Chemical mapping of a 177-nucleotide RNA with DMS.
RNA sequence: GGGAACGACUCGAGUAGAGUCGAAAAAAGAGGAAGGCGAAGAAAAAAGGGGCGGGGCCCCCGAUCCGAGGGGUCCGGCGCCGAACUUUGGAGAGAACUCCGGGCCGAUAAUGGUCGGGUAGCACACGAUUAUAAUUAAGUUCGCUUAAUUAUAAUCAAAAGAAACAACAACAACAAC
Reactivity to DMS in 0.01 (KOAc 150mM, MgCl2 10mM, bicine 150mM(pH8.5), 24C), signal-to-noise 1, nucleotides 027 to 126: a100a070g020a080g010g010a050a020g000g020c040g040a080a060g010a020a040a040a110a130a100g000g010g020g000c030g030g030g000g000c000c000c000c000c010g000a100u000c180c080g020a130g010g000g010g010u010c000c000g000g030c050g000c040c000g010a110a080c080u000u020u000g000g030a060g010a110g000a060a080c040u000c010c030g000g010g010c000c010g010a090u030a040a050u010g070g010u000c020g000g000g010u010a040g030c020a060c170a150c080
Background: For DMS the reverse transcriptase was MarathonRT. It was measured as part of the RMDB library VIROID.